[RMDB]
RNA sequence: GGGAACGACUCGAGUAGAGUCGAAAAAGAUCCUGUGCCGAUUGCGGUGCUGGCGUCAGAGCAGAGGAAAACGUGGUAUGAGAGUUUUUCCAAAGAGUCCAGACACGCUUCCAGGCCCUCUCAGCCACCUUACGACCACAUUCGUGUGGUCGUAAGGAAAAGAAACAACAACAACAAC
Reactivity to DMS in 0.01 (KOAc 150mM, MgCl2 10mM, bicine 150mM(pH8.5), 24C), signal-to-noise 1, nucleotides 027 to 126: a170g000a140u000c000c010u000g030u010g020c000c050g000a170u000u000g060c050g030g060u000g020c040u000g000g000c030g000u000c090a060g000a250g000c040a070g000a290g020g010a030a030a050a080c140g020u000g000g020u000a080u000g020a110g000a020g000u000u000u000u020u000c080c040a040a200a110g010a040g000u010c000c040a040g000a150c040a050c050g000c050u000u000c050c040a170g010g000c210c120c000u000c010u010c010a080g000c000c000a060
Reactivity to 2A3 in 0.01 (KOAc 150mM, MgCl2 10mM, bicine 150mM(pH8.5), 24C), signal-to-noise 1, nucleotides 027 to 126: a000g040a140u030c020c010u060g020u050g030c020c050g220a210u110u190g040c050g080g080u070g080c020u000g010g000c010g040u050c060a040g040a000g070c060a010g070a090g040g070a010a010a010a030c070g030u080g000g010u180a300u140g140a100g000a050g080u000u050u000u050u040c030c000a070a000a000g020a020g020u000c020c000a000g080a040c030a010c020g010c010u080u000c040c010a030g020g010c020c010c010u030c000u020c000a000g030c010c010a070